The data come from the RNA Mapping Database (RMDB), library OK2TST. An RNA of 177 nucleotides, treated with DMS and 2A3 and read out base by base. Conditions: 150 mM KOAc, 10 mM MgCl2 and 150 mM bicine (pH 8.5), 24 C. For DMS the reverse transcriptase was MarathonRT. 2A3 adducts were read by reverse transcription with SuperScript II with manganese.
RNA sequence: GGGAACGACUCGAGUAGAGUCGAAAAUCCAUUACAUGGGGAAAGAGUUAGCUCGUUACGACGCUGUGAUCCCGCGAAUUGGCGCUUCUAUUACUUUUUACGGCACAGCCGUCGUGCGCCAGUUUGAACCGUAUAAUAAUUUCGAUUAUUAUACGGUAAAAGAAACAACAACAACAAC
Reactivity to DMS in 0.01 (KOAc 150mM, MgCl2 10mM, bicine 150mM(pH8.5), 24C), signal-to-noise 9, nucleotides 027 to 126: u000c010c010a130u010u010a100c160a170u010g010g000g010g000a060a080a110g000a120g010u000u000a070g020c040u000c050g010u010u010a090c080g010a040c100g010c010u000g010u000g000a140u000c060c010c020g010c050g000a010a020u000u000g000g010c070g020c060u000u010c150u000a110u010u010a090c130u000u010u010u010u010a050c020g000g010c010a090c150a110g010c040c040g010u000c210g010u000g010c010g010c050c030a030g000u000u000u000g010a130
Reactivity to 2A3 in 0.01 (KOAc 150mM, MgCl2 10mM, bicine 150mM(pH8.5), 24C), signal-to-noise 9, nucleotides 027 to 126: u000c010c000a010u080u140a090c060a120u120g070g000g010g030a050a110a030g110a060g070u100u090a020g020c010u010c020g040u060u080a080c120g010a010c060g000c010u020g030u030g100a070u040c000c010c010g060c020g020a010a020u010u010g020g000c020g020c070u120u040c060u120a210u240u090a170c050u120u170u060u120u140a010c010g010g000c020a040c060a300g010c030c010g010u040c020g010u010g000c000g000c000c000a000g000u010u010u030g030a030